Chemical mapping of a 177-nucleotide RNA with 2A3 and DMS. The DMS profile rests on 11,710 reads.
[RMDB]
RNA sequence: GGGAACGACUCGAGUAGAGUCGAAAACAGCGGCCGCAUUGGAUGCAGAGGUCCUGAUUGAUGCGGGCCUUGGUGACAUAGUUGAGGUUGAGAUAUUGCCAGUCGGUCACAUGGGAAACGGCGCAGAUGCUAUCCUUUUAUUCGUAAAAGGAUAGCAAAAAGAAACAACAACAACAAC
Reactivity to 2A3 in 0.01 (KOAc 150mM, MgCl2 10mM, bicine 150mM(pH8.5), 24C), signal-to-noise 2, nucleotides 027 to 126: c000a010g040c050g070g000c000c000g010c050a010u050u110g110g010a040u120g120c040a010g050a040g060g040u110c000c010u030g040a110u030u120g080a040u110g030c010g030g030g010c010c000u040u050g060g020u060g000a040c010a060u170a080g110u030u110g060a030g020g000u060u050g020a040g010a060u070a040u100u110g030c000c010a040g060u080c010g050g000u080c010a010c010a120u150g030g030g030a020a150a010c000g030g010c030g000c060a020g020a070
Reactivity to DMS in 0.01 (KOAc 150mM, MgCl2 10mM, bicine 150mM(pH8.5), 24C), signal-to-noise 6, nucleotides 027 to 126: c080a120g010c100g010g020c020c010g020c060a060u000u010g010g030a080u000g020c060a130g010a120g010g020u000c030c000u010g010a100u010u010g010a080u010g010c070g000g010g010c000c000u000u000g020g020u000g000a060c060a070u010a100g010u000u010g000a090g000g000u000u000g010a120g000a100u010a090u010u000g000c010c010a090g010u000c070g010g010u000c040a030c050a090u000g000g000g000a060a080a110c100g000g010c040g020c090a100g000a150
The RNA was probed in 150 mM KOAc, 10 mM MgCl2 and 150 mM bicine (pH 8.5) at 24 C. The 2A3 profile rests on 2,283 reads.